[RMDB]
RNA sequence: GGGAACGACUCGAGUAGAGUCGAAAAGAUAUGGAGAUAGUGAGAUCAUGACCAAUGAUGUCGGAAACGAUUGAGGUCAUGGGAGUCUCCCUAUCUCCUAAGUCAAAGCCAGGGUUCGCCCUGGCAACCUUGACAUGUAGUUCGCUACAUGUCAAGGAAAAGAAACAACAACAACAAC
Reactivity to 2A3 in 0.01 (KOAc 150mM, MgCl2 10mM, bicine 150mM(pH8.5), 24C), signal-to-noise 3, nucleotides 027 to 126: g030a000u090a040u130g000g010a010g010a000u010a000g010u010g010a000g000a030u300c000a010u020g000a000c000c020a060a270u190g090a030u140g050u010c010g010g020a060a070a060c020g000a010u010u070g020a010g000g010u000c010a000u010g000g060g010a090g040u010c000u000c000c000c000u010a000u010c000u000c010c000u010a010a000g000u010c030a070a050a020g000c020c000a010g040g030g000u060u140c280g150c040c000c000u000g000g010c000a000a000
Reactivity to DMS in 0.01 (KOAc 150mM, MgCl2 10mM, bicine 150mM(pH8.5), 24C), signal-to-noise 5, nucleotides 027 to 126: g000a030u000a300u000g010g010a020g000a010u000a000g010u000g000a010g020a040u000c000a010u000g000a020c000c000a110a130u010g000a130u000g010u000c000g000g000a130a070a190c010g010a010u010u000g000a130g000g010u000c010a010u000g010g000g030a190g010u010c000u000c000c050c000u000a010u000c010u000c000c000u000a000a040g010u000c020a080a100a150g010c000c010a010g000g000g000u000u000c280g020c000c000c000u000g000g000c000a010a010

Record summary:
Chemical mapping of a 177-nucleotide RNA with 2A3 and DMS. For 2A3 the reverse transcriptase was SuperScript II with manganese. Reactivities are given for positions 27 through 126. The RNA was probed in 150 mM KOAc, 10 mM MgCl2 and 150 mM bicine (pH 8.5) at 24 C.